[RMDB]
RNA sequence: GGGAACGACUCGAGUAGAGUCGAAAAGGCGCUGCCCGACUAUGCCAGGUUUAUUCAGCUGCCCAAGGAUGCCGUUGUAUACAUUGAUCCGUGUAUAGGACCGGCAACAGCCAACCGUAAGGUCGUGAGGUUGCACAACCUUCGGGUUGUGCAACCUAAAAGAAACAACAACAACAAC
Reactivity to 2A3 in 0.01 (KOAc 150mM, MgCl2 10mM, bicine 150mM(pH8.5), 24C), signal-to-noise 1, nucleotides 027 to 126: g030g000c030g020c060u060g010c030c030c000g000a020c000u010a050u170g050c000c000a040g070g000u060u000u130a130u070u090c040a000g000c000u130g010c010c000c050a030a030g060g070a080u060g000c000c000g000u040u000g300u010a000u030a000c070a090u020u150g270a050u150c120c110g020u000g080u010a000u000a000g040g080a020c020c000g000g010c040a050a000c060a000g000c020c020a000a000c000c000g120u090a010a010g000g040u060c070g060u010g080